Chemical mapping of a 177-nucleotide RNA with 2A3 and DMS. Conditions: 150 mM KOAc, 10 mM MgCl2 and 150 mM bicine (pH 8.5), 24 C.
[RMDB]
RNA sequence: GGGAACGACUCGAGUAGAGUCGAAAACGAUUGCCCGUAUAUAUUAUUGCACUCAUGAGAAUGAGUGUAACUUGGGAUACGGGCAAUGAUAUGCAUGUAUCCCAAGUUACAAUUACAUGCAUAAUAAGGUAGACCUAGAUUUCGAUCUAGGUCUACCAAAAGAAACAACAACAACAAC
Reactivity to 2A3 in 0.01 (KOAc 150mM, MgCl2 10mM, bicine 150mM(pH8.5), 24C), signal-to-noise 3, nucleotides 027 to 126: c120g090a040u060u030g030c000c000c000g040u020a070u010a040u010a000u200u030a060u010u040g000c040a010c020u010c000a000u030g080a050g060a160a070u010g000a000g010u010g000u000a020a000c000u000u070g120g020g010a000u000a020c020g060g000g000c000a000a000u010g000a000u000a010u040g000c000a000u010g000u000a020u020c000c010c010a000a010g030u040u110a050c060a060a020u110u040a030c020a030u010g000c020a000u030a010a100u170a240a030
Reactivity to DMS in 0.01 (KOAc 150mM, MgCl2 10mM, bicine 150mM(pH8.5), 24C), signal-to-noise 1, nucleotides 027 to 126: c260g010a040u010u000g000c000c000c000g000u010a020u000a060u000a010u010u000a080u000u040g000c010a040c020u000c010a030u000g000a300g000a180a000u000g020a030g030u000g000u000a000a000c080u000u020g050g020g000a010u000a000c000g000g020g000c000a010a000u000g000a090u020a010u000g000c000a000u010g000u010a020u000c040c000c010a090a130g040u060u040a040c100a040a040u020u000a010c070a010u000g000c000a000u000a000a080u040a050a040

About this RNA:
In probing experiments dimethyl sulfate is read out at A N1 and C N3, which are open when not base-paired.